[RMDB]
RNA sequence: GGGAACGACUCGAGUAGAGUCGAAAACGAUAAGCAUUCGUGCUUAUCGACGGUACGAAAGUACAAAGGAGCAAAAGCAUCGGCUCCUAAAAACGAUGCUAAAGACAACGGGGUUCGCCCCGUUGAAUAACAGUUUCUUAUUCGUAAGAAACUGUUAAAAAGAAACAACAACAACAAC
Reactivity to 2A3 in 0.01 (KOAc 150mM, MgCl2 10mM, bicine 150mM(pH8.5), 24C), signal-to-noise 3, nucleotides 027 to 126: c010g000a010u010a000a000g010c000a010u040u120c200g070u030g000c000u000u000a000u000c000g000a010c020g110g000u010a000c010g040a130a050a030g010u010a010c030a030a240a080g010g010a000g000c000a070a130a090a000g000c000a000u000c000g010g000c000u010c000c050u100a070a030a000a000a000c010g000a000u000g010c000u020a070a020a020g130a030c020a010a000c010g000g010g000g030u040u060c180g110c000c000c000c000g000u000u010g000a000a000
Reactivity to DMS in 0.01 (KOAc 150mM, MgCl2 10mM, bicine 150mM(pH8.5), 24C), signal-to-noise 5, nucleotides 027 to 126: c020g010a000u000a000a000g010c000a030u000u010c220g040u000g010c000u000u000a000u000c000g000a080c230g010g020u000a000c000g000a150a060a200g010u000a000c000a110a130a170g000g000a010g010c010a090a080a070a030g000c000a000u000c000g030g000c000u000c000c000u020a010a010a000a030a030c000g020a010u000g010c000u000a060a100a110g000a180c020a010a020c000g000g000g010g010u010u020c230g010c000c000c000c000g000u000u010g010a090a080